[RMDB]
RNA sequence: GGGAACGACUCGAGUAGAGUCGAAAAAUAGAGAUUGGAGUCAUACAACCCCAGAAACCAUUCCUUAUACCUUGAGUAUUGCUGAAUUCAGUUUAGCGUGCAUGCUCUUGGCUAUUCUCAUAGCGAUAAAAUCUGUAGUCCUUCGGGACUACAGAAAGUUCUCUUAUGACUUCGGUCAUAAGAGAACAAAAGAAACAACAACAACAAC
Reactivity to DMS in 0.01 (KOAc 150mM, MgCl2 10mM, bicine 150mM(pH8.5), 24C), signal-to-noise 1, nucleotides 027 to 156: a140u000a100g020a100g020a170u010u000g030g050a030g020u030c010a170u010a090c130a030a050c030c000c030c000a160g010a130a060a110c080c000a120u000u000c010c000u010u010a140u000a050c000c020u020u010g000a030g000u000a030u020u010g030c030u010g030a020a080u000u010c120a240g000u000u000u000a030g020c000g040u000g050c130a100u000g010c000u000c030u000u000g010g000c070u000a100u010u000c030u000c030a100u000a130g000c030g000a170u000a040a100a040a170u020c030u020g000u010a030g010u000c010c020u000u010c300g070g030g010a030c020u000a010c010a020g010a010a000a050
Reactivity to 2A3 in 0.01 (KOAc 150mM, MgCl2 10mM, bicine 150mM(pH8.5), 24C), signal-to-noise 4, nucleotides 027 to 156: a000u110a030g030a000g020a030u030u070g050g010a050g090u110c070a050u080a210c070a110a150c040c020c010c030a020g140a050a040a020c040c020a060u040u030c010c000u060u060a070u020a130c010c000u010u020g010a000g000u020a030u120u190g000c020u020g050a130a110u140u200c050a130g130u030u070u140a050g060c050g020u080g040c010a020u030g000c000u000c000u020u000g010g000c040u040a050u100u040c050u010c050a090u120a050g030c020g100a030u100a120a110a010a070u000c000u000g000u000a000g000u000c000c010u010u050c120g070g000g000a000c000u000a000c000a000g000a010a000a000